[RMDB]
An RNA of 177 nucleotides, treated with DMS and 2A3 and read out base by base. The reactions ran in a buffer of 150 mM KOAc, 10 mM MgCl2 and 150 mM bicine (pH 8.5), at 24 C. The 2A3 profile rests on 6,511 reads. It was measured as part of the RMDB library OK1LIB.
RNA sequence: GGGAACGACUCGAGUAGAGUCGAAAAGAGGAGCUAUCUACUCUCCUACUGUAACCAUUGCUACUCCUGUAGUAUUUUCUAAAAACUCUGCAACAAACAAUGCUAAUAACACUACAGAUACUCAGAGCGCCCUAAUUAAUUUCGAUUAAUUAGGGCGAAAAGAAACAACAACAACAAC
Reactivity to DMS in 0.01 (KOAc 150mM, MgCl2 10mM, bicine 150mM(pH8.5), 24C), signal-to-noise 2, nucleotides 027 to 126: g000a040g030g000a030g000c250u000a080u000c010u030a030c110u050c000u020c000c000u020a070c010u000g000u020a050a200c080c030a000u020u020g070c040u000a080c070u020c070c180u000g000u000a020g000u000a030u000u020u000u020c030u030a080a050a140a050a100c080u000c050u010g030c110a080a090c170a080a120a080c110a060a110u000g010c050u020a050a080u020a040a080c080a040c050u010a080c050a020g000a040u020a020c070u030c050a120g010a090g050
Reactivity to 2A3 in 0.01 (KOAc 150mM, MgCl2 10mM, bicine 150mM(pH8.5), 24C), signal-to-noise 9, nucleotides 027 to 126: g050a010g030g010a010g020c070u100a100u280c060u110a160c070u060c000u050c040c000u120a280c030u050g090u120a080a050c030c010a080u020u190g030c010u010a030c010u030c060c060u050g010u010a010g020u010a130u050u090u030u050c100u110a080a070a070a090a080c040u070c030u090g020c030a070a030c030a110a240a090c050a120a110u090g030c020u120a070a100u100a240a050c020a000c060u050a030c000a010g050a090u050a070c050u040c090a020g020a040g080